Structure probing data (2A3 and DMS) for a 177-nucleotide construct. For 2A3 the reverse transcriptase was SuperScript II with manganese. The reactions ran in a buffer of 150 mM KOAc, 10 mM MgCl2 and 150 mM bicine (pH 8.5), at 24 C.
[RMDB]
RNA sequence: GGGAACGACUCGAGUAGAGUCGAAAACUGGGGUAUGGUGACAUGGUGCCGAAGACAAUAGCUGGCAAGAUUUUUGGUUCAAUAUGCUCCUUGAGUGGAGUCUUAGUGAUUGCUCUGCCAGUUCCUGGCAAUGGCCGUCAUUCGUGACGGCCAUUGCAAAAGAAACAACAACAACAAC
Reactivity to 2A3 in 0.01 (KOAc 150mM, MgCl2 10mM, bicine 150mM(pH8.5), 24C), signal-to-noise 1, nucleotides 027 to 126: c000u000g000g000g030g000u030a030u040g040g020u040g020a010c030a150u080g060g000u050g070c080c000g000a070a000g000a000c040a000a050u060a050g010c000u000g000g030c020a040a070g010a010u000u040u040u170u300g060g000u050u040c000a020a010u100a020u060g050c050u010c000c050u000u000g170a150g070u060g040g000a080g010u000c100u200u090a090g030u080g040a020u040u040g050c000u050c000u000g050c000c000a030g030u080u000c030c000u040g020
Reactivity to DMS in 0.01 (KOAc 150mM, MgCl2 10mM, bicine 150mM(pH8.5), 24C), signal-to-noise 1, nucleotides 027 to 126: c020u000g020g040g080g000u040a010u010g000g010u000g000a080c200a080u000g000g030u010g030c010c000g000a120a030g000a000c100a080a140u030a220g000c000u000g000g000c030a030a100g060a070u000u000u030u040u000g040g040u050u000c010a010a150u000a230u000g000c000u000c080c000u010u000g010a120g040u050g000g000a060g000u000c030u030u010a120g000u050g000a090u100u040g000c060u000c030u000g030c010c000a140g050u000u000c000c040u000g010

About this RNA
Source: RMDB library RFM100, as collected in RNAgym.